[RMDB]
RNA sequence: GGGAACGACUCGAGUAGAGUCGAAAAGAUAUGGACGGUUCACAGGGCCGACGAAGAAUCUCGGAAACGAGAUUCAGAGGCUCCUGUGAGACCGUCCUAAGUCAAAACUAUCCGUUCGCGGAUAGAAGCGUACUUUAUAGUUCGCUAUAAAGUACGCAAAAGAAACAACAACAACAAC
Reactivity to DMS in 0.01 (KOAc 150mM, MgCl2 10mM, bicine 150mM(pH8.5), 24C), signal-to-noise 4, nucleotides 027 to 126: g010a070u000a300u010g010g000a020c000g010g010u000u010c000a010c000a020g000g000g010c000c000g020a160c250g000a110a070g000a020a010u000c000u000c000g010g010a100a160a280c000g000a010g010a010u000u000c000a040g000a140g000g010c000u010c010c020u000g010u000g000a060g000a000c010c000g010u000c000c000u000a010a080g000u000c050a100a100a140a220c000u000a000u000c010c000g010u000u010c280g010c020g000g000a010u000a000g010a080a110
Reactivity to 2A3 in 0.01 (KOAc 150mM, MgCl2 10mM, bicine 150mM(pH8.5), 24C), signal-to-noise 2, nucleotides 027 to 126: g020a020u080a040u150g000g010a000c000g020g000u010u000c000a000c000a010g000g010g010c000c000g090a300c030g010a140a070g020a010a010u000c000u000c010g010g010a070a080a060c020g010a000g010a020u010u000c010a010g000a010g000g020c040u200c070c010u000g000u000g000a010g000a010c000c010g000u000c000c000u000a000a000g000u000c020a010a000a050a090c000u000a010u000c020c000g000u050u060c300g000c020g110g010a000u000a010g020a030a020